[RMDB]
RNA sequence: GGGAACGACUCGAGUAGAGUCGAAAAAUGGGUCAAGCCGCAUGAUCAAGCUGUGGAUGGAGGGAAACCGCCGUGACUGGCAUCUUGAUCCGGCAACUGGCGGCGGAAUGCUGUUCACAGCCGGUAAUAGGACGUAAUCAUUCGUGAUUACGUCCUAAAAAGAAACAACAACAACAAC
Reactivity to 2A3 in 0.01 (KOAc 150mM, MgCl2 10mM, bicine 150mM(pH8.5), 24C), signal-to-noise 1, nucleotides 027 to 126: a010u060g040g000g000u040c050a040a010g100c050c000g100c090a080u120g010a080u100c050a050a020g000c010u010g000u010g000g000a010u010g000g000a000g030g030g000a000a060a000c000c020g000c000c000g010u020g080a150c000u020g000g020c010a060u130c100u170u150g030a110u100c020c030g000g020c030a060a080c080u070g020g000c010g010g000c000g000g020a010a000u050g010c020u000g000u030u000c010a000c000a010g000c000c000g010g030u060a110a020
Reactivity to DMS in 0.01 (KOAc 150mM, MgCl2 10mM, bicine 150mM(pH8.5), 24C), signal-to-noise 3, nucleotides 027 to 126: a070u000g000g020g000u010c050a050a080g040c020c020g030c210a100u000g000a080u020c060a190a040g000c040u000g020u000g000g000a010u000g020g010a040g030g010g000a270a110a050c020c000g000c010c000g000u000g000a150c010u010g000g020c180a090u010c170u020u000g000a120u000c020c010g000g000c050a060a030c110u020g000g020c010g000g000c010g000g010a160a070u150g010c010u000g000u000u000c010a020c080a060g000c020c040g000g010u020a090a120